[RMDB]
RNA sequence: GGGAACGACUCGAGUAGAGUCGAAAAAAUGAAGGCUGCUUUUUUCGUUACACCCUUCCCCGGCAGCGCCGGUGGCAGUGUUCAGCCCUUUUCCGGGCAAACUGCUGCCAGUCUGUCCUAGGCGCAAACUUUCCAGUCAGUUCGCUGACUGGAAAGUAAAAGAAACAACAACAACAAC
Reactivity to 2A3 in 0.01 (KOAc 150mM, MgCl2 10mM, bicine 150mM(pH8.5), 24C), signal-to-noise 2, nucleotides 027 to 126: a000a000u180g030a020a000g020g000c030u040g080c100u140u130u040u000u060u110c060g060u060u120a050c020a100c040c000c000u000u000c000c000c000c000g030g000c000a030g000c020g010c000c030g010g000u030g010g000c000a010g000u000g040u060u110c080a050g000c020c000c010u040u230u120u060c040c020g010g000g000c020a040a020a000c000u030g000c000u000g000c020c000a000g040u020c020u020g070u040c000c030u080a060g030g020c010g000c000a060a020
Reactivity to DMS in 0.01 (KOAc 150mM, MgCl2 10mM, bicine 150mM(pH8.5), 24C), signal-to-noise 2, nucleotides 027 to 126: a040a000u020g040a110a030g010g020c100u010g040c030u020u010u000u000u020u030c080g010u020u010a060c170a180c120c000c000u010u010c000c000c010c040g040g010c070a060g030c090g020c020c020g000g020u000g000g000c000a020g030u020g000u000u060c270a200g030c020c020c000u000u020u040u070c200c240g040g000g000c000a100a090a010c000u010g010c000u010g010c010c000a040g010u040c010u010g010u010c050c080u010a090g000g000c020g000c010a100a060
Conditions: 150 mM KOAc, 10 mM MgCl2 and 150 mM bicine (pH 8.5), 24 C. Chemical mapping of a 177-nucleotide RNA with 2A3 and DMS. The 2A3 profile rests on 1,695 reads. 2A3 adducts were read by reverse transcription with SuperScript II with manganese. DMS adducts were read by reverse transcription with MarathonRT.